The record gives the reactivity of an RNA of 207 nucleotides to DMS and 2A3. The data come from the RNA Mapping Database (RMDB), library OK3TST. For 2A3, 1,763 sequencing reads were counted. 2A3 adducts were read by reverse transcription with SuperScript II with manganese.

RNA sequence: GGGAACGACUCGAGUAGAGUCGAAAAGCGUUCGCAUGCAAUACGCCCUGCCUGCUGCCGAAAGCCAACGGCGCUAUGGUAGUGACGGGUACGACGGAUGAGCGCCCGAUGGCGUGAAGCCCCUGUGACCGGAGGCGCUUAUAGCGACGAGACACGCGCACUAUAACAACUUCGGUUGUUAUAGUGCAAAAGAAACAACAACAACAAC
Reactivity to DMS in 0.01 (KOAc 150mM, MgCl2 10mM, bicine 150mM(pH8.5), 24C), signal-to-noise 1, nucleotides 027 to 156: g020c020g010u010u000c040g000c060a100u000g000c070a140a050u040a040c000g030c020c000c040u000g020c080c010u010g010c060u000g020c020c020g000a070a100a170g100c120c040a170a240c090g010g030c000g030c030u010a100u000g010g020u000a060g040u000g010a140c000g000g010g050u000a100c090g020a190c030g030g020a190u000g000a300g000c010g010c000c000c070g020a170u020g030g040c000g000u110g000a130a170g000c010c000c000c060u000g040u000g000a110c070c010g010g000a110g040g010c020g000c040u000u000a040u000a130g040c030g010a060c050g010a290g010a140c030a020c040g000c230
Reactivity to 2A3 in 0.01 (KOAc 150mM, MgCl2 10mM, bicine 150mM(pH8.5), 24C), signal-to-noise 2, nucleotides 027 to 156: g070c010g050u090u060c020g010c040a000u100g040c000a070a100u110a160c060g030c020c000c000u010g010c020c020u020g000c020u080g000c000c000g190a210a120a040g070c050c040a130a070c080g060g000c040g000c020u040a080u240g020g000u020a010g040u030g130a070c050g000g010g030u080a070c020g070a010c010g040g090a060u060g090a040g020c010g050c000c000c010g160a120u130g010g010c040g010u090g050a100a050g040c020c010c000c020u070g100u100g080a110c000c050g030g030a080g030g000c000g010c010u000u020a080u090a020g000c000g020a050c010g030a020g010a010c040a010c120g070c050